The record gives the reactivity of an RNA of 177 nucleotides to 2A3 and DMS.
It was measured as part of the RMDB library M2PK50.
For DMS the reverse transcriptase was MarathonRT.
For 2A3 the reverse transcriptase was SuperScript II with manganese.
Reactivities are given for positions 27 through 126.
[RMDB]
RNA sequence: GGGAACGACUCGAGUAGAGUCGAAAAGACCUUCAGUUCGCUGAAGGUCGAUGAUGGUAUGAGAGAUUACCAUCUGUUAAGUGAUAUGGAUAAGAUCUCUCAGUGAACGUGCUUUCGAGCACGUUAAUUAAGCAGUGUGUUUCGACACACUGCUUAAAAAAGAAACAACAACAACAAC
Reactivity to 2A3 in 0.01 (KOAc 150mM, MgCl2 10mM, bicine 150mM(pH8.5), 24C), signal-to-noise 1, nucleotides 027 to 126: g010a010c000c000u020u000c000a000g010u040u120c150g030c160u030g020a010a000g000g000u000c000g000a010u020g000a000u000g000g110u110a050u070g020a010g000a000g000a000u040u050a010c020c020a030u000c020u020g090u050u140a110a100g130u080g240a120u050a050u190g190g020a050u080a090a070g040a030u010c010u040c010u000c000a010g060u040g180a050a000c000g000u000g010c000u100u010u080c280g000a000g000c010a000c000g000u030u000a000a040
Reactivity to DMS in 0.01 (KOAc 150mM, MgCl2 10mM, bicine 150mM(pH8.5), 24C), signal-to-noise 2, nucleotides 027 to 126: g000a020c000c000u000u000c000a000g010u000u000c200g020c000u010g000a000a010g010g020u000c000g000a030u000g010a070u000g020g000u000a070u000g010a030g000a030g000a030u000u000a080c040c040a010u000c000u000g000u010u000a070a120g010u010g030a110u000a130u010g010g020a130u000a090a100g000a020u000c010u000c010u000c010a140g000u010g020a010a020c000g030u000g030c000u000u000u020c210g000a010g000c000a010c000g000u000u000a010a110